The record gives the reactivity of an RNA of 207 nucleotides to 2A3.
RNA sequence: GGGAACGACUCGAGUAGAGUCGAAAACCGGUCUACUUCGGUAGACCGGAAAAAAACCUUUGUGAAGACAGGACAUGCUCGGUUAAUGCCCAUUGGGCAUUACCGAGCAACAGCCUGCUUCACUCUGGUAAAAAACAACAUUGUUCGCAAUGUUGAAGCCGUUAAAAUGAUUCGUCAUUUUAACGGCAAAAGAAACAACAACAACAAC
Reactivity to 2A3 in 0.01 (KOAc 150mM, MgCl2 10mM, bicine 150mM(pH8.5), 24C), signal-to-noise 1, nucleotides 027 to 156: c000c020g040g030u030c000u000a000c000u030u060c280g010g000u010a000g000a000c000c000g000g020a100a060a000a040a000a000a000c000c000u000u010u060g010u010g000a010a010g040a150c000a000g000g000a040c030a090u070g000c000u030c040g010g020u130u220a010a010u000g000c000c060c280a300u300u300g000g000g000c010a000u010u000a000c000c000g050a010g000c000a000a000c000a000g000c000c000u010g000c010u010u000c000a000c000u010c020u000g000g000u000a080a080a040a000a000a040c020a000a000c010a010u010u010g040u070u060c230g010c110a040a010u040g010u040u010g040a090a000
The RNA was probed in 150 mM KOAc, 10 mM MgCl2 and 150 mM bicine (pH 8.5) at 24 C.